[RMDB]
RNA sequence: GGGAACGACUCGAGUAGAGUCGAAAAUCCUUCCUUUUCGAAGGAAGGACAGUGCACAGUCUUCGCAUCUGUGAAUCACACAACAGCCGUGUGUAUGCGAGGUUUUAAUCAAGUUCGCUUGAUUAAAGUUAAGGCGGUAUUUCGAUACCGCCUUAACAAAAGAAACAACAACAACAAC
Reactivity to 2A3 in 0.01 (KOAc 150mM, MgCl2 10mM, bicine 150mM(pH8.5), 24C), signal-to-noise 2, nucleotides 027 to 126: u010c000c000u000u010c020c000u060u060u070u080c240g130a020a000g000g010a010a020g020g010a010c020a010g190u140g010c070a020c000a070g000u020c030u070u030c100g000c020a020u000c010u030g060u050g190a110a140u090c000a000c000a000c000a020a240c060a080g180c090c060g030u020g030u030g000u040a020u000g000c000g010a020g000g040u040u000u030u010a000a000u000c010a010a010g010u030u050c200g020c100u000u000g000a000u000u000a020a020a010
Reactivity to DMS in 0.01 (KOAc 150mM, MgCl2 10mM, bicine 150mM(pH8.5), 24C), signal-to-noise 2, nucleotides 027 to 126: u000c010c000u000u010c000c000u000u000u000u020c180g020a010a000g000g020a010a020g000g000a000c090a050g000u010g000c050a060c030a020g000u000c050u000u010c010g000c000a050u000c040u000g000u000g000a130a070u010c060a060c020a000c050a050a130c250a140g010c150c080g000u000g010u000g010u010a010u000g000c000g000a030g010g030u030u010u000u000a000a010u000c000a010a000g000u000u010c210g000c010u000u000g000a010u000u000a000a010a040